[RMDB]
RNA sequence: GGGAACGACUCGAGUAGAGUCGAAAAGGACGACUAUGUAACCGUCCACGUGCCGAGUGCUGGGUUUGAUCAGCACCUCGGAAAUCAUGCACCAUGGUUUUGGUCGAUCGAUAGGAGAGGCGGCGGCCGCCCGCCACUAGUUCGCUAGUGGCGGGCGAAAAGAAACAACAACAACAAC
Reactivity to DMS in 0.01 (KOAc 150mM, MgCl2 10mM, bicine 150mM(pH8.5), 24C), signal-to-noise 1, nucleotides 027 to 126: g010g000a000c040g000a080c100u010a120u080g000u060a030a110c130c070g000u020c070c040a140c160g000u000g020c000c000g000a030g030u000g000c000u020g000g050g000u030u020u020g070a180u030c000a000g000c000a000c090c070u040c000g000g060a150a020a070u060c110a180u000g000c090a210c090c030a020u000g000g060u020u000u120u000g050g000u010c010g000a080u000c110g070a060u000a090g020g000a130g000a080g040g000c040g000g000c070g000g000c040
Reactivity to 2A3 in 0.01 (KOAc 150mM, MgCl2 10mM, bicine 150mM(pH8.5), 24C), signal-to-noise 4, nucleotides 027 to 126: g010g000a010c020g010a040c060u130a050u300g130u190a070a040c030c000g020u030c010c010a030c060g090u080g030c010c000g010a000g000u000g000c000u000g030g050g160u180u240u240g240a300u160c000a000g000c000a040c000c030u000c000g000g010a020a020a050u140c020a040u070g030c030a020c030c000a060u070g070g000u050u050u040u120g040g010u020c030g020a160u050c010g020a060u100a110g050g060a080g020a020g000g040c010g000g000c000g010g020c020
Notes:
Structure probing data (DMS and 2A3) for a 177-nucleotide construct. The 2A3 profile rests on 2,338 reads. 2A3 adducts were read by reverse transcription with SuperScript II with manganese. Values cover nucleotides 27 to 126. It was measured as part of the RMDB library OK1LIB.